An RNA of 207 nucleotides, treated with DMS and 2A3 and read out base by base.
The DMS profile rests on 6,050 reads.
The reactions ran in a buffer of 150 mM KOAc, 10 mM MgCl2 and 150 mM bicine (pH 8.5), at 24 C.
[RMDB]
RNA sequence: GGGAACGACUCGAGUAGAGUCGAAAAAACAUUUAAUUGGACUAGCGAUGCAGGACCAGGUGAUAUGUUAUGGAAUUGUCGUGUUGCUCCUGAUUUAUUUAGGCGUGUAUCUUAUACAACGCCUAGUUUGAGGGAGGAAUUACAUAUGAUUCCUGCGCAAUCUUACCCAGUUCGCUGGGUAAGAUUGAAAAGAAACAACAACAACAAC
Reactivity to DMS in 0.01 (KOAc 150mM, MgCl2 10mM, bicine 150mM(pH8.5), 24C), signal-to-noise 3, nucleotides 027 to 156: a060a060c030a050u000u000u010a140a090u020u010g020g000a200c040u000a080g010c050g010a080u010g010c060a050g020g000a150c040c020a150g010g010u000g020a070u000a050u010g020u020u010a120u010g010g010a080a050u000u010g030u000c180g050u000g020u000u000g000c010u000c000c000u000g010a300u020u000u000a040u010u000u000a020g010g060c010g050u000g020u000a060u010c200u010u030a160u000a070c070a050a020c010g020c010c010u000a010g010u000u000u000g010a300g000g010g010a020g010g000a080a010u000u020a070c060a090u000a050u000g000a060u010u000c000c000u010g000c100g030
Reactivity to 2A3 in 0.01 (KOAc 150mM, MgCl2 10mM, bicine 150mM(pH8.5), 24C), signal-to-noise 5, nucleotides 027 to 156: a010a000c190a080u200u160u140a140a100u140u100g030g000a020c030u060a080g010c040g100a060u150g070c040a020g050g010a080c040c010a030g000g050u050g030a030u020a030u190g110u130u060a060u150g010g020a020a050u030u040g050u070c080g000u030g030u040u030g040c010u010c000c010u020g020a030u020u030u080a050u120u180u020a020g000g000c010g000u000g020u020a020u050c140u150u240a060u020a120c090a200a030c050g000c000c000u000a000g000u010u000u020g020a020g000g000g000a000g000g050a000a030u140u110a050c020a030u070a050u120g020a030u000u040c010c010u020g000c010g010